[RMDB]
RNA sequence: GGGAACGACUCGAGUAGAGUCGAAAAACAGGAGUACGCUCCUGAAAAGGCCUCAUCUCGUGUCUCCGCCAUCGGGGCGACUGACCAGUAGUAAUACAGGCACUUGGCCUAGAUGAGGAGAAGGAAAAUUCAACGAACACUUCGGUGUUCGUUGAAUAAAAGAAACAACAACAACAAC
Reactivity to 2A3 in 0.01 (KOAc 150mM, MgCl2 10mM, bicine 150mM(pH8.5), 24C), signal-to-noise 4, nucleotides 027 to 126: a000c000a010g000g000a000g010u070a010c280g010c120u000c000c000u000g010a040a060a010a010g120g030c000c020u000c000a160u010c020u000c030g110u140g000u120c010u050c020c020g070c070c000a140u170c100g180g060g000g040c040g080a120c070u010g080a220c000c010a020g050u030a000g000u030a060a130u010a030c020a020g000g000c020a010c110u140u180g180g030c000c010u060a070g000a030u030g050a010g040g060a020g030a030a070g130g060a020a110a030
Reactivity to DMS in 0.01 (KOAc 150mM, MgCl2 10mM, bicine 150mM(pH8.5), 24C), signal-to-noise 1, nucleotides 027 to 126: a230c010a010g000g000a040g020u000a060c250g000c010u000c000c000u000g010a000a060a070a110g000g000c010c000u020c030a010u010c060u000c090g000u090g000u000c000u000c030c000g000c140c000a260u000c090g000g000g000g040c000g000a080c100u000g050a150c000c010a030g030u020a010g000u040a120a070u020a000c000a030g000g020c050a070c220u000u010g000g000c020c010u000a040g010a020u000g010a190g000g000a050g000a180a060g020g000a080a020a030
Chemical mapping of a 177-nucleotide RNA with 2A3 and DMS. Values cover nucleotides 27 to 126. The RNA was probed in 150 mM KOAc, 10 mM MgCl2 and 150 mM bicine (pH 8.5) at 24 C. High 2A3 reactivity points to a flexible backbone, as in loops and unpaired stretches. For 2A3, 1,540 sequencing reads were counted. DMS adducts were read by reverse transcription with MarathonRT.